[RMDB]
RNA sequence: GGGAACGACUCGAGUAGAGUCGAAAAACGAGAUUCUUGAUGUCACUUAUGAACUCCGCAAUUAUCCGUUCUUGACCGAUCUUCCGGGGUCGUUCGACAUCGGAGCCACGACGUACACAACGUCGAUGCGGGCGGCGAACGUGACCAGUGAGUACGGGAUUAUCGGUAGAUUCGUCUACCGAUAAUCAAAAGAAACAACAACAACAAC
Reactivity to 2A3 in 0.01 (KOAc 150mM, MgCl2 10mM, bicine 150mM(pH8.5), 24C), signal-to-noise 9, nucleotides 027 to 156: a010c110g020a090g020a100u080u030c020u060u110g060a120u120g040u020c010a030c040u120u170a080u260g100a100a040c030u030c020c000g020c020a060a180u150u050a060u180c000c010g010u020u010c040u070u050g010a010c020c010g020a010u000c000u080u020c080c170g060g000g010g000u000c000g000u000u010c010g000a010c010a030u030c010g010g010a020g040c040c020a050c020g010a000c000g020u140a080c120a030c050a240a040c020g000u000c010g010a020u050g000c040g020g060g000c080g030g000c030g030a060a020c060g010u000g010a020c010c000a040g040u040g080a020g020u050a040c030g060g040
Reactivity to DMS in 0.01 (KOAc 150mM, MgCl2 10mM, bicine 150mM(pH8.5), 24C), signal-to-noise 4, nucleotides 027 to 156: a090c030g010a110g010a100u000u000c010u010u000g020a130u010g020u000c020a070c050u000u000a100u010g020a110a090c010u000c010c000g000c020a070a130u000u000a100u000c010c000g030u000u000c030u000u010g010a050c020c000g000a050u000c030u000u000c170c140g020g010g040g030u000c010g040u010u000c020g020a030c020a060u000c010g020g000a060g000c060c050a140c000g020a040c000g010u010a100c250a140c100a150a100c020g000u000c010g010a120u000g000c020g000g020g020c010g020g020c060g020a080a120c210g010u000g000a050c020c030a080g020u000g000a060g030u000a120c020g020g000